Source: RMDB library OK2TRN, as collected in RNAgym.
Structure probing data (DMS and 2A3) for a 177-nucleotide construct.
For 2A3 the reverse transcriptase was SuperScript II with manganese.
For 2A3, 945 sequencing reads were counted.
[RMDB]
RNA sequence: GGGAACGACUCGAGUAGAGUCGAAAAAGUAAUCUUCAUUCUGAUCUACACUAGUAUUAACAUGUCAGUACCACAUUAUAACUCACCAACUACUGAUUGAUUAUCUGGUCCUGAAAAUACCCAGGGACUCACCCUCUACUUUCGAGUAGAGGGUGAGAAAAGAAACAACAACAACAAC
Reactivity to DMS in 0.01 (KOAc 150mM, MgCl2 10mM, bicine 150mM(pH8.5), 24C), signal-to-noise 1, nucleotides 027 to 126: a050g000u000a050a050u000c030u010u000c070a140u010u010c070u000g010a100u010c090u000a050c070a030c080u000a080g000u000a070u010u000a050a110c120a000u000g000u010c010a040g020u010a060c010c020a010c150a040u010u020a070u020a030a090c100u000c070a060c020c050a080a120c100u000a090c060u020g010a060u000u010g010a090u020u000a060u000c060u000g000g000u010c000c000u010g000a030a070a080a150u000a080c000c010c010a170g000g010g020a100
Reactivity to 2A3 in 0.01 (KOAc 150mM, MgCl2 10mM, bicine 150mM(pH8.5), 24C), signal-to-noise 1, nucleotides 027 to 126: a000g090u090a040a050u040c030u050u020c030a100u180u000c070u020g020a060u000c010u070a010c040a040c100u020a040g070u020a110u180u180a190a030c020a070u110g010u020c010a030g020u030a050c020c020a080c040a010u080u230a030u130a200a010c030u000c000a130c000c060a090a040c000u130a020c030u040g010a020u080u080g030a070u090u150a030u050c020u040g000g020u040c020c000u000g000a000a070a010a100u070a040c010c030c020a000g000g020g050a060